[RMDB]
RNA sequence: GGGAACGACUCGAGUAGAGUCGAAAAGAAGCGCGGAAGGGAACCGGCCACCCGGCUGGCGAACAACCCCGAGACGGGGUGCUAGUCGCGUGACCACUAAAGAUCACUCACUUGCAACGGUAGUUCGUAUAGUCACACAAUUCGUUGUGUGACUAUAAAAAGAAACAACAACAACAAC
Reactivity to 2A3 in 0.01 (KOAc 150mM, MgCl2 10mM, bicine 150mM(pH8.5), 24C), signal-to-noise 3, nucleotides 027 to 126: g040a070a010g030c050g000c030g080g020a070a010g040g000g020a030a020c040c040g020g000c010c000a020c020c000c000g020g000c010u000g000g010c030g040a110a040c040a030a030c020c030c000c000g050a090g090a130c180g020g010g020g000u010g000c020u010a020g000u020c000g000c010g040u020g000a000c000c010a050c060u140a170a090a020g060a080u080c020a010c060u030c000a050c020u050u110g000c030a060a030c040g060g020u070a050g020u090u040c040g010
Reactivity to DMS in 0.01 (KOAc 150mM, MgCl2 10mM, bicine 150mM(pH8.5), 24C), signal-to-noise 7, nucleotides 027 to 126: g010a130a120g010c060g020c050g000g010a100a070g010g000g010a090a050c210c110g000g010c010c020a040c040c080c070g010g010c000u000g010g020c010g000a130a130c220a180a080c010c000c000c000g000a190g000a150c180g010g000g000g010u000g000c030u000a030g010u010c020g030c300g020u010g000a030c010c000a130c130u010a060a080a060g010a060u000c050a060c040u000c050a070c060u010u000g000c090a050a080c110g000g010u000a050g010u000u000c060g010

Background:
The data come from the RNA Mapping Database (RMDB), library OK2TST. An RNA of 177 nucleotides, treated with 2A3 and DMS and read out base by base. Reactivities are given for positions 27 through 126. For DMS the reverse transcriptase was MarathonRT. The reactions ran in a buffer of 150 mM KOAc, 10 mM MgCl2 and 150 mM bicine (pH 8.5), at 24 C.